[RMDB]
RNA sequence: GGGAACGACUCGAGUAGAGUCGAAAAUCACGGCACAAUAGCGCUCGUCUGCGUUCUGUCAGGGCCUGUUUUGGUAAUGCCUUUCUUUCUGUUAUGCGCUACGCUGAUCGUCUGAGUAUAUGGCCUGGUGAGGCAAUAACUUCGGUUAUUGCCUCACAAAAGAAACAACAACAACAAC
Reactivity to 2A3 in 0.01 (KOAc 150mM, MgCl2 10mM, bicine 150mM(pH8.5), 24C), signal-to-noise 1, nucleotides 027 to 126: u050c020a050c080g010g000c000a080c020a100a210u110a130g020c000g000c050u010c020g210u020c010u110g000c020g030u040u060c070u030g110u080c050a070g010g030g050c000c070u140g020u100u050u070u080g070g000u110a070a020u110g010c030c010u030u030u050c000u020u120u010c030u030g140u080u070a100u220g000c020g010c000u030a030c010g030c000u000g050a090u000c040g000u040c000u090g040a030g070u090a020u030a030u250g050g030c000c000u000g050
Reactivity to DMS in 0.01 (KOAc 150mM, MgCl2 10mM, bicine 150mM(pH8.5), 24C), signal-to-noise 1, nucleotides 027 to 126: u020c060a050c120g000g020c020a060c080a070a090u000a030g030c030g010c020u000c120g040u000c090u000g000c000g010u000u020c050u010g010u000c080a080g010g010g010c050c000u010g010u000u000u010u010g020g010u020a100a100u020g010c020c020u010u000u000c030u000u010u010c020u010g030u010u000a100u010g010c060g020c070u000a050c090g010c030u000g000a150u010c050g010u010c000u020g000a090g000u000a050u020a090u000g020g010c000c040u000g000
An RNA of 177 nucleotides, treated with 2A3 and DMS and read out base by base. The RNA was probed in 150 mM KOAc, 10 mM MgCl2 and 150 mM bicine (pH 8.5) at 24 C. Source: RMDB library RFMREP, as collected in RNAgym.